[RMDB]
RNA sequence: GGGAACGACUCGAGUAGAGUCGAAAAAUAGAUGUCCAGGCCCAUGUGUUCCACGGCAUAAUGUGGGGACUGCAGAGAGGAAGGGACAUGUUUAUGUCCCAGGUGAGUCAUGGAAUCUCAGAAUAUGGCUAAACGUGCAGUUCGCUGCACGUUUAGCAAAAGAAACAACAACAACAAC
Reactivity to DMS in 0.01 (KOAc 150mM, MgCl2 10mM, bicine 150mM(pH8.5), 24C), signal-to-noise 2, nucleotides 027 to 126: a110u000a030g010a060u010g010u000c010c000a010g010g010c030c030c000a060u010g000u000g030u010u000c010c000a050c050g000g000c180a140u010a140a060u010g030u000g040g010g010g000a060c070u040g060c040a030g000a190g010a150g010g010a100a120g000g010g000a050c000a000u000g000u010u000u010a030u000g020u000c000c000c020a080g030g000u010g010a070g000u000c050a090u000g000g000a140a030u000c040u020c080a160g000a030a150u020a080u010g010
Reactivity to 2A3 in 0.01 (KOAc 150mM, MgCl2 10mM, bicine 150mM(pH8.5), 24C), signal-to-noise 1, nucleotides 027 to 126: a000u190a010g010a040u070g050u040c000c030a000g010g000c040c010c010a040u040g010u000g020u070u020c040c000a010c040g000g000c100a120u220a070a090u270g020u040g040g030g000g000a010c020u000g000c080a000g070a010g020a010g140g080a030a210g040g000g010a000c000a010u030g150u000u180u120a030u020g010u020c000c000c000a000g000g040u130g010a010g000u010c020a050u050g030g030a060a050u000c020u000c010a080g110a290a090u140a140u210g130